Chemical mapping of a 207-nucleotide RNA with 2A3. For 2A3, 1,735 sequencing reads were counted. Conditions: 150 mM KOAc, 10 mM MgCl2 and 150 mM bicine (pH 8.5), 24 C. High 2A3 reactivity points to a flexible backbone, as in loops and unpaired stretches.
RNA sequence: GGGAACGACUCGAGUAGAGUCGAAAAUAAUAAAGUAUGCAUUAAAGAUAAACGCAGAAGAUAAUUUUGCAUUAGCAGCUUAAUUUAGCGCUGCUCAUCCUUCCUCAAUUGCCCACGGUUGAGAGUAAGGGUGUCAUUUAAAAGUGGGGAACCGAGCGUAGUAUUAGUCCUUCGGGACUAAUACUACAAAAGAAACAACAACAACAAC
Reactivity to 2A3 in 0.01 (KOAc 150mM, MgCl2 10mM, bicine 150mM(pH8.5), 24C), signal-to-noise 3, nucleotides 027 to 156: u130a010a020u080a010a090a010g090u060a100u100g000c010a000u070u080a120a080a060g030a050u120a060a150a040c100g000c130a020g010a110a010g030a090u100a170a120u120u100u150u180g000c000a020u050u040a020g020c010a000g000c000u050u160a150a040u300u300u180a190g060c030g000c020u010g000c010u020c000a010u000c000c000u000u000c010c000u020c000a000a000u000u000g020c010c000c000a020c000g000g000u000u000g010a010g000a020g040u160a000a000g000g020g000u000g000u010c000a000u020u130u220a010a150a010a000g000u000g000g000g000g000a060a000c090c030g010a010g070c060